[RMDB]
Structure probing data (DMS and 2A3) for a 207-nucleotide construct. It was measured as part of the RMDB library RNAMAK. DMS adducts were read by reverse transcription with MarathonRT. The RNA was probed in 150 mM KOAc, 10 mM MgCl2 and 150 mM bicine (pH 8.5) at 24 C.
RNA sequence: GGGAACGACUCGAGUAGAGUCGAAAAGAUGAUCCUUUCGAGGAUCAUCAAAAAACCUUUGUGAUCUCUAGCGACGAUCUAUUGGGACCCAUUGGGUCCUUAUAGGGAGCUAACGUGAGAUCACUCUGGUAAAAACAUAUGACUUCGGUCAUAUGAACUUGUAACUGUAGUUCGCUACAGUUACAAGAAAAGAAACAACAACAACAAC
Reactivity to DMS in 0.01 (KOAc 150mM, MgCl2 10mM, bicine 150mM(pH8.5), 24C), signal-to-noise 2, nucleotides 027 to 156: g030a010u000g000a000u010c000c000u000u000u000c290g030a040g000g010a000u000c000a020u010c000a000a060a050a120a070a060c010c010u000u000u000g020u000g030a030u000c000u000c010u000a220g040c010g020a090c040g020a300u000c040u000a030u000u000g000g020g020a020c000c000c020a300u000u000g090g060g000u000c010c000u000u010a010u000a020g020g020g020a300g030c010u000a100a140c040g010u020g000a040g020a030u000c010a010c000u000c030u000g000g030u000a010a060a100a140a160c000a040u000a000u000g000a020c000u000u000c300g010g000u000c000a000u000a020u000g000a020a110
Reactivity to 2A3 in 0.01 (KOAc 150mM, MgCl2 10mM, bicine 150mM(pH8.5), 24C), signal-to-noise 4, nucleotides 027 to 156: g010a000u000g000a000u000c010c000u080u110u200c280g070a010g000g000a000u000c000a000u000c000a000a000a000a020a000a000c000c000u020u010u010g000u000g000a010u000c000u000c020u060a010g010c000g300a300c010g000a090u000c010u000a000u000u010g010g000g000a000c000c000c070a080u110u300g030g000g010u000c020c000u000u000a000u000a010g010g010g000a010g000c000u020a060a080c140g120u140g030a000g000a000u000c000a000c000u000c010u000g010g020u100a120a070a050a020a010c000a000u000a000u010g010a000c010u040u070c300g100g000u000c000a000u000a000u010g000a010a040